[RMDB]
RNA sequence: GGGAACGACUCGAGUAGAGUCGAAAAUUUGCACAUUGAUAAAAUGAUGUUUUCACUGGGUAGACUAACUAAAAAACACCUAUUUUCUACUAAGAGAAAAUAGGUGUUUUUAUUUACUUUUAGCAUACAUGCUUUAAGUGUUCGCACUUAAAGCAUGAAAAGAAACAACAACAACAAC
Reactivity to DMS in 0.01 (KOAc 150mM, MgCl2 10mM, bicine 150mM(pH8.5), 24C), signal-to-noise 1, nucleotides 027 to 126: u000u000u000g000c030a180c040a000u000u000g000a160u010a050a070a060a080u000g000a180u000g020u000u000u020u000c040a130c090u020g020g000g050u000a050g000a090c090u010a050a100c210u010a000a000a000a000a000a000c000a000c020c000u000a000u000u000u000u000c000u000a100c140u010a130a150g020a050g010a010a000a020a020u000a010g000g020u000g000u000u000u000u000u000a040u010u000u000a010c050u000u000u000u000a040g010c110a040u010a220